[RMDB]
RNA sequence: GGGAACGACUCGAGUAGAGUCGAAAAAGAUAUGGACGUUUGCAAGAAGUGCGUAUCAAUGAUGCGACUUCGGAAACGAAGUCGUUGAGAUACGUGUAGCACUUUGAUGACCAAACGUCCUAAGUCACGACUCGUAUAACUUCGGUUAUACGAGUCGAAAAGAAACAACAACAACAAC
Reactivity to DMS in 0.01 (KOAc 150mM, MgCl2 10mM, bicine 150mM(pH8.5), 24C), signal-to-noise 2, nucleotides 027 to 126: a040g000a070u000a300u000g000g000a010c010g010u000u000u000g030c000a090a080g000a000a010g000u000g000c020g020u000a000u000c000a200a140u020g010a150u000g000c000g010a010c010u000u000c000g000g000a070a080a170c000g040a020a020g000u000c000g020u000u000g000a090g000a000u000a000c000g030u020g020u010a140g000c000a000c000u010u000u010g000a080u000g000a210c300c000a010a000a010c000g010u000c000c000u000a020a080g000u000c060a270
Reactivity to 2A3 in 0.01 (KOAc 150mM, MgCl2 10mM, bicine 150mM(pH8.5), 24C), signal-to-noise 2, nucleotides 027 to 126: a000g050a060u030a040u130g010g000a010c000g010u000u000u010g080c100a240a300g000a020a000g070u030g030c080g000u010a000u030c010a100a300u180g000a020u130g000c000g000a000c010u000u020c020g000g030a040a030a000c020g010a000a000g000u020c010g000u010u010g020a020g000a000u000a010c000g090u150g230u290a060g020c010a010c010u050u060u100g290a300u140g010a020c060c000a010a000a010c000g020u000c000c000u000a050a000g020u030c010a020